This 177-nucleotide RNA was probed chemically with DMS. The data come from the RNA Mapping Database (RMDB), library M2PK90.
RNA sequence: GGGAACGACUCGAGUAGAGUCGAAAAAUUCAGGAGAGUAGAUGAUUCGCGUUAAGUGUGUGUGAAUGGGAUGUCGUCACACAACGAAGCGAGAGCGCGGUGAAUCAUUGCAUCCGCUCCAAACGAACAAGUCUCAUGGUUUCGACCAUGAGACUUGAAAAGAAACAACAACAACAAC
Reactivity to DMS in 0.01 (KOAc 150mM, MgCl2 10mM, bicine 150mM(pH8.5), 24C), signal-to-noise 2, nucleotides 027 to 126: a130u000u000c070a120g030g010a040g010a020g000u000a300g000a000u000g000a060u000u000c010g000c010g000u010u020a040a060g030u000g000u000g010u000g030u000g010a050a050u010g010g010g020a020u000g000u010c260g020u010c000a000c000a020c020a010a020c100g020a080a040g020c020g010a240g000a170g000c000g010c060g020g020u000g000a020a030u000c020a000u000u010g000c020a000u000c000c000g000c000u000c000c020a050a150a070c150g000a040a080
Background:
DMS adducts were read by reverse transcription with MarathonRT.